This 207-nucleotide RNA was probed chemically with DMS and 2A3. The 2A3 profile rests on 5,435 reads. Reactivities are given for positions 27 through 156. For DMS the reverse transcriptase was MarathonRT.

RNA sequence: GGGAACGACUCGAGUAGAGUCGAAAAGCAAGCUAGCCGCCAAAAAAGCAAACUUGACCACCAAGGAUAAAAGAGAUCUUAUCCAAGGAUGCAAAAGAUAAUCUCACUUUUGACACCCACUGAUCUCAAAACGUGCGGUUCUUCGGAACCGCACGAAGGUUACAUAAAUCUUCGGAUUUAUGUAACCAAAAGAAACAACAACAACAAC
Reactivity to DMS in 0.01 (KOAc 150mM, MgCl2 10mM, bicine 150mM(pH8.5), 24C), signal-to-noise 1, nucleotides 027 to 156: g000c000a060a070g020c030u000a300g000c050c040g020c030c060a000a090a080a140a200a060g030c050a020a130a050c020u010u010g000a130c010c020a080c050c050a050a210g020g030a060u000a040a050a040a170g000a080g030a040u000c020u000u020a100u000c060c070a020a180g000g020a000u010g000c030a020a020a020a040g000a120u000a080a070u010c080u000c060a160c010u000u000u000u000g020a120c030a000c010c010c000a110c120u010g010a080u010c000u010c020a010a030a050a090c010g010u000g020c000g030g000u000u000c010u000u000c300g060g030a000a010c000c000g010c020a000c000g000a000a030
Reactivity to 2A3 in 0.01 (KOAc 150mM, MgCl2 10mM, bicine 150mM(pH8.5), 24C), signal-to-noise 5, nucleotides 027 to 156: g030c010a000a030g000c010u070a010g010c000c020g100c060c080a070a110a060a040a020a000g030c050a080a060a030c010u050u040g070a100c040c000a020c020c010a070a040g030g000a020u030a050a030a020a030g020a000g000a010u000c000u030u030a010u020c040c030a050a060g010g010a010u070g020c010a000a010a030a010g020a090u160a210a220u130c070u040c100a050c020u030u020u020u040g090a090c020a050c020c030c000a050c100u070g010a000u000c010u000c000a020a060a020a020c000g010u000g010c020g010g030u010u010c010u020u040c050g060g010a000a000c000c000g000c000a000c000g000a000a010